[RMDB]
RNA sequence: GGGAACGACUCGAGUAGAGUCGAAAAAUCGAUCGCGUCGAGCGCCUGAUGGAUCGUCUCACGAGUACGUAGAGGCCCACGAGCGUGUAGGCGCGACAGGCCGCGCGAUCUGGAUCCGAUCCUGGCCAAUCUAGUUGUGCUUCGGCACAACUAGAUUAAAAGAAACAACAACAACAAC
Reactivity to 2A3 in 0.01 (KOAc 150mM, MgCl2 10mM, bicine 150mM(pH8.5), 24C), signal-to-noise 2, nucleotides 027 to 126: a030u110c010g040a040u000c000g010c000g080u040c030g050a070g060c060g010c030c010u300g010a300u090g030g020a120u080c090g020u000c030u020c000a020c000g090a150g300u300a100c030g030u060a110g060a050g040g030c000c000c000a000c020g040a060g000c030g040u010g070u170a020g000g000c000g030c000g080a000c010a000g010g000c000c000g090c030g000c100g040a010u010c020u050g110g030a060u040c040c060g000a020u000c010c020u060g000g040c030c020
Reactivity to DMS in 0.01 (KOAc 150mM, MgCl2 10mM, bicine 150mM(pH8.5), 24C), signal-to-noise 2, nucleotides 027 to 126: a060u000c050g000a170u010c020g000c000g010u000c030g010a180g010c070g000c000c000u000g020a160u000g040g000a100u010c150g030u000c010u020c020a070c010g010a260g040u000a090c070g100u020a090g010a160g010g010c070c030c060a070c070g000a120g000c010g000u000g010u010a300g020g020c010g000c000g010a050c070a030g010g020c030c010g000c050g040c100g020a010u000c010u000g040g020a080u000c080c050g000a070u000c050c040u010g000g010c100c030